The record gives the reactivity of an RNA of 177 nucleotides to 2A3 and DMS. DMS adducts were read by reverse transcription with MarathonRT. Source: RMDB library OK2TRN, as collected in RNAgym. The DMS profile rests on 19,048 reads. The RNA was probed in 150 mM KOAc, 10 mM MgCl2 and 150 mM bicine (pH 8.5) at 24 C.
RNA sequence: GGGAACGACUCGAGUAGAGUCGAAAACUGGCUGCGCAAUGGGGCCGUCGUCACUCCAGGGCCCCAGGUGGAGAUGGCCCAGAAUGGUUCAAGCCGCAUCUUAACCUUGCGAGGCUGCCAACUGGGGAUACUUACAUGACUUCGGUCAUGUAAGUAUAAAAGAAACAACAACAACAAC
Reactivity to 2A3 in 0.01 (KOAc 150mM, MgCl2 10mM, bicine 150mM(pH8.5), 24C), signal-to-noise 4, nucleotides 027 to 126: c010u010g050g000c020u060g010c020g020c050a070a280u090g020g000g010g010c040c010g080u060c040g080u050c040a050c110u070c020c040a060g000g040g030c000c000c000c000a000g000g000u000g030g020a050g020a070u100g050g000c000c000c010a050g070a110a120u100g000g030u100u120c060a050a030g030c040c020g010c030a040u050c010u080u080a050a050c010c000u010u010g010c010g030a070g050g020c030u010g010c010c000a030a030c020u010g010g010g020g010
Reactivity to DMS in 0.01 (KOAc 150mM, MgCl2 10mM, bicine 150mM(pH8.5), 24C), signal-to-noise 9, nucleotides 027 to 126: c070u010g010g020c020u000g000c030g010c050a070a080u000g010g010g020g010c020c010g020u010c090g010u010c130a120c100u000c040c060a120g010g000g010c010c000c000c010a010g000g010u000g000g000a050g010a080u000g010g010c010c010c020a090g000a090a100u010g000g000u000u010c130a090a080g010c070c060g000c100a050u000c050u000u010a090a120c140c070u000u000g010c020g000a160g020g000c020u000g000c020c030a050a150c020u000g000g000g010g000